Chemical mapping of a 177-nucleotide RNA with DMS and 2A3. The reactions ran in a buffer of 150 mM KOAc, 10 mM MgCl2 and 150 mM bicine (pH 8.5), at 24 C.
RNA sequence: GGGAACGACUCGAGUAGAGUCGAAAAUGACCUUCAGCCGCCCCUGCACCAGAAGAUAGAAAAGCCUGGCCUCUUCGCCCUGUUUGAAAACGGCGCUUCCCUUGGGAACCGCCCGCGGCAUGGCCAACAUUAUGCUACCAUUCGUGGUAGCAUAAUGAAAAGAAACAACAACAACAAC
Reactivity to DMS in 0.01 (KOAc 150mM, MgCl2 10mM, bicine 150mM(pH8.5), 24C), signal-to-noise 6, nucleotides 027 to 126: u010g010a100c020c010u010u000c090a100g020c020c040g020c030c040c020c010u000g010c060a080c040c040a080g010a080a090g000a120u010a080g000a100a090a110a160g000c060c050u000g010g000c040c030u000c070u000u010c060g000c020c040c040u000g020u010u010u010g000a070a060a090a150c160g010g010c010g010c270u000u000c010c000c050u010u000g030g010g010a030a040c110c020g020c020c010c070g010c100g010g020c040a050u000g010g010c020c050a070a160
Reactivity to 2A3 in 0.01 (KOAc 150mM, MgCl2 10mM, bicine 150mM(pH8.5), 24C), signal-to-noise 2, nucleotides 027 to 126: u020g040a040c010c000u020u010c090a010g010c000c000g080c000c000c000c020u010g020c020a010c010c010a040g060a160a010g040a140u220a080g160a100a140a030a000g040c030c040u040g010g030c020c000u050c000u080u080c020g000c000c030c000u070g130u110u200u150g190a160a160a010a020c040g010g010c010g000c020u020u020c000c010c000u070u180g060g000g000a000a010c020c010g000c010c070c000g000c030g000g020c030a030u040g010g040c020c000a000a010